RNA sequence: GGGAACGACUCGAGUAGAGUCGAAAAGCUUGGGAGGCUGAGGUGGGAGCAUUGCUUGAGUCUGAGAGGUCAAGGCUGCAGUGAGGUGUGAUUGUGCUAUUGCACUCCAGCCUGGGCAAAAAAAUGAAACAGGACGAUUAUUCGUAAUCGUCCUGUUAAAAGAAACAACAACAACAAC
Reactivity to 2A3 in 0.01 (KOAc 150mM, MgCl2 10mM, bicine 150mM(pH8.5), 24C), signal-to-noise 2, nucleotides 027 to 126: g040c060u040u060g060g010g010a130g050g060c100u040g030a040g030g120u160g070g030g000a040g000c070a040u050u180g030c000u030u070g030a030g030u000c020u090g050a120g010a030g190g010u030c030a020a000g010g000c010u030g000c000a020g020u040g100a040g100g070u030g020u040g070a130u060u150g100u050g070c060u060a080u160u110g000c010a000c010u010c010c010a000g020c000c000u010g010g010g000c000a040a020a000a000a000a010a170u160g040a060
Reactivity to DMS in 0.01 (KOAc 150mM, MgCl2 10mM, bicine 150mM(pH8.5), 24C), signal-to-noise 3, nucleotides 027 to 126: g000c060u010u020g010g010g000a120g000g000c110u000g000a080g010g010u000g030g010g010a100g020c060a050u000u000g000c040u000u000g020a060g020u000c030u010g000a140g010a100g020g020u000c040a090a030g000g000c010u000g010c210a050g010u000g000a080g010g000u000g000u000g000a130u000u010g010u000g020c060u000a080u000u010g000c010a020c000u000c090c030a050g000c010c000u010g000g010g000c040a010a000a020a060a040a040a100u020g010a200
Conditions: 150 mM KOAc, 10 mM MgCl2 and 150 mM bicine (pH 8.5), 24 C. An RNA of 177 nucleotides, treated with 2A3 and DMS and read out base by base. High 2A3 reactivity points to a flexible backbone, as in loops and unpaired stretches. 2A3 adducts were read by reverse transcription with SuperScript II with manganese. Values cover nucleotides 27 to 126. The DMS profile rests on 4,346 reads. The data come from the RNA Mapping Database (RMDB), library OK2TST. For DMS the reverse transcriptase was MarathonRT.